[RMDB]
RNA sequence: GGGAACGACUCGAGUAGAGUCGAAAAUGAGAAUACUUUUAGUACAAGCGAGUACACGCAGUAUACUGCUACUUGUGUGAGAAUACUUUUAGUACAAGCGAGUACACGCAGUAUACUGCCACUUGUGGCCCGCAGUGGUGUUCGCACCACUGCGGGCAAAAGAAACAACAACAACAAC
Reactivity to 2A3 in 0.01 (KOAc 150mM, MgCl2 10mM, bicine 150mM(pH8.5), 24C), signal-to-noise 1, nucleotides 027 to 126: u180g060a110g050a270a020u160a100c020u110u170u080u150a020g130u120a050c000a050a010g060c040g070a000g060u150a020c040a040c150g000c020a000g070u000a000u000a000c000u000g000c000u000a000c020u000u020g000u020g000u040g040a100g300a120a000u050a140c110u000u080u120u300a010g000u010a000c000a000a000g000c000g000a020g000u000a000c100a000c170g000c000a000g000u000a000u000a000c000u000g000c000c000a000c000u000u000g050u010g090
Structure probing data (2A3) for a 177-nucleotide construct.
Conditions: 150 mM KOAc, 10 mM MgCl2 and 150 mM bicine (pH 8.5), 24 C.
The 2A3 profile rests on 502 reads.
2A3 adducts were read by reverse transcription with SuperScript II with manganese.
Source: RMDB library OK1LIB, as collected in RNAgym.
Reactivities are given for positions 27 through 126.